[RMDB]
RNA sequence: GGGAACGACUCGAGUAGAGUCGAAAAACUGGUUCCAAUCACUCCUCAGACCGUGCUUCCAAUAGCUGGAAUAAAACGCGCACACGGUGCCGAAUUGAAGCCAACUGUUCAAGUGAUGGUGCCGGCACCAUGCGCGUGGAUUCGUCCACGCGCAUGGAAAAGAAACAACAACAACAAC
Reactivity to 2A3 in 0.01 (KOAc 150mM, MgCl2 10mM, bicine 150mM(pH8.5), 24C), signal-to-noise 2, nucleotides 027 to 126: a000c030u050g030g000u060u010c010c000a000a130u020c010a020c020u020c010c010u060c010a030g020a150c070c070g000u100g010c000u060u020c020c000a050a090u050a080g040c070u070g040g050a030a010u120a070a050a040a000c060g040c000g030c040a010c000a030c150g070g020u020g050c000c000g060a070a060u110u110g050a030a010g010c010c000a040a020c020u050g090u190u100c070a050a060g040u000g020a090u020g000g010u020g000c000c080g000g000c000a040
Reactivity to DMS in 0.01 (KOAc 150mM, MgCl2 10mM, bicine 150mM(pH8.5), 24C), signal-to-noise 2, nucleotides 027 to 126: a110c030u000g020g010u000u010c010c000a080a070u000c030a080c060u000c030c030u000c020a050g010a110c110c040g000u020g010c090u010u010c000c060a030a080u020a090g020c080u000g030g000a080a100u000a070a050a080a110c050g010c060g000c060a060c060a120c140g010g030u000g020c000c000g000a100a150u000u000g030a060a070g010c040c020a020a110c000u000g030u000u000c150a070a050g030u010g040a080u010g010g010u000g000c050c000g000g000c040a050